[RMDB]
RNA sequence: GGGAACGACUCGAGUAGAGUCGAAAAAUGCUAAAUUGGAGAAGAGGCCAGUGAAGUUUGAAGUCGGGGAAUCGUCGGGCUCGAAAAAGGCCGAAACAGCAAAACCCAAAGUUGCUACGGCUGAUAAUGUUACGAUGUGAUUCGUCACAUCGUAACAAAAAGAAACAACAACAACAAC
Reactivity to DMS in 0.01 (KOAc 150mM, MgCl2 10mM, bicine 150mM(pH8.5), 24C), signal-to-noise 1, nucleotides 027 to 126: a000u000g000c070u020a040a180a060u000u000g010g000a120g010a140a100g000a090g000g010c090c060a030g000u020g000a150a090g020u000u000u040g000a130a090g000u000c130g080g000g000g020a110a130u000c090g030u000c040g000g010g030c020u030c080g010a040a070a010a040a180g010g060c030c000g000a060a030a030c090a020g000c000a040a040a060a090c080c020c030a090a110a100g000u000u000g000c030u000a190c070g000g000c020u010g000a110u010a080a140